[RMDB]
RNA sequence: GGGAACGACUCGAGUAGAGUCGAAAAUAGUAGAGAUGGGGGUUUCACCAUGUUGGCCAAGCUGGUCUCAAACUCCUGACCUCAAGUGAUCCACCCACCUUGACCUCCCAAAUUGCUGGGAUUACAGGUGUGACCCACCGCACAGGGCCAACUGUGACAGUAAUGAUUACUUCGGUAAUCAUUACUGAAAAGAAACAACAACAACAAC
Reactivity to DMS in 0.01 (KOAc 150mM, MgCl2 10mM, bicine 150mM(pH8.5), 24C), signal-to-noise 2, nucleotides 027 to 156: u000a150g010u000a130g010a070g010a050u000g010g030g010g000g010u000u000u020c020a130c010c000a100u000g010u010u000g020g020c030c040a150a080g030c030u000g020g020u010c040u000c050a040a090a080c030u000c010c020u030g000a050c040c000u000c030a100a090g010u010g010a050u000c000c030a120c020c020c020a030c010c020u010u000g010a090c010c020u000c000c000c000a010a110a090u000u000g010c050u000g000g000g030a130u000u000a040c050a020g000g000u000g030u000g010a100c060c030c050a040c000c070g030c090a100c050a080g000g020g050c020c010a050a090c020u000g010u010g000a190
Reactivity to 2A3 in 0.01 (KOAc 150mM, MgCl2 10mM, bicine 150mM(pH8.5), 24C), signal-to-noise 3, nucleotides 027 to 156: u090a030g060u060a030g000a000g020a170u120g020g000g010g020g030u020u070u020c060a050c060c040a090u130g030u000u040g030g000c020c010a020a070g000c080u110g000g020u030c040u030c090a090a110a060c040u030c010c050u050g040a060c010c010u020c060a060a030g020u020g040a020u030c020c010a040c050c010c000a030c010c000u020u050g030a040c030c020u010c000c010c000a020a040a090u180u150g040c050u030g000g000g030a020u030u070a080c050a040g000g010u020g010u020g060a060c030c020c020a020c060c030g030c010a050c030a080g030g020g050c010c010a040a040c040u060g010u020g020a030